[RMDB]
RNA sequence: GGGAACGACUCGAGUAGAGUCGAAAACAGAGGACAGCGGGCCUGAUGGUUCCAUCUCAUUACAGCAAUAUGAGCAUGGCCCUCAAUCCAGUGAAAAUGGCCGCUAUGCAGAGUCAGCCCACAGCCGACGACGGUUGGGCCGCUUCUAUUAGCCGCACUCCUUCCUAGGUUUCGACCUAGGAAGGAGAAAAGAAACAACAACAACAAC
Reactivity to 2A3 in 0.01 (KOAc 150mM, MgCl2 10mM, bicine 150mM(pH8.5), 24C), signal-to-noise 1, nucleotides 027 to 156: c030a000g090a120g100g000a020c030a020g060c090g040g030g110c000c020u120g020a120u070g040g050u160u140c060c000a140u000c030u000c020a050u160u180a110c050a160g060c080a190a050u070a000u160g020a000g000c100a050u020g000g010c050c030c010u080c050a000a040u010c000c040a040g070u030g090a000a040a110a080u040g020g000c050c060g040c080u000a050u140g000c020a010g020a000g120u100c070a010g000c000c000c000a010c050a000g020c010c040g070a150c110g020a130c060g110g000u050u020g010g000g020c000c000g000c070u120u020c000u100a120u190u100a010g000c000c000g010c080a020